[RMDB]
RNA sequence: GGGAACGACUCGAGUAGAGUCGAAAAGAAAAAGCGGUUCUCGGGAGCUUCAGUUGUUUCCACCGGGUAGUAGCCGAAGCGACAGCGCAAAGGGGGCGAGGGGUGGUCCUGCGGGCGCGAGGAAGGACAAUAAAAUGAACUUCGGUUCAUUUUAUUGAAAAGAAACAACAACAACAAC
Reactivity to DMS in 0.01 (KOAc 150mM, MgCl2 10mM, bicine 150mM(pH8.5), 24C), signal-to-noise 1, nucleotides 027 to 126: g010a080a080a040a130a170g010c020g000g030u010u010c020u010c050g010g010g010a100g050c050u000u000c130a030g000u000u010g000u000u010u000c000c020a100c100c050g040g030g020u010a070g020u010a060g010c030c030g000a090a090g000c040g000a020c090a080g030c060g010c060a030a070a150g000g000g000g010g020c110g020a060g000g010g000g020u000g020g000u020c010c070u010g030c070g010g010g010c070g030c050g000a040g000g000a080a040g020g010a130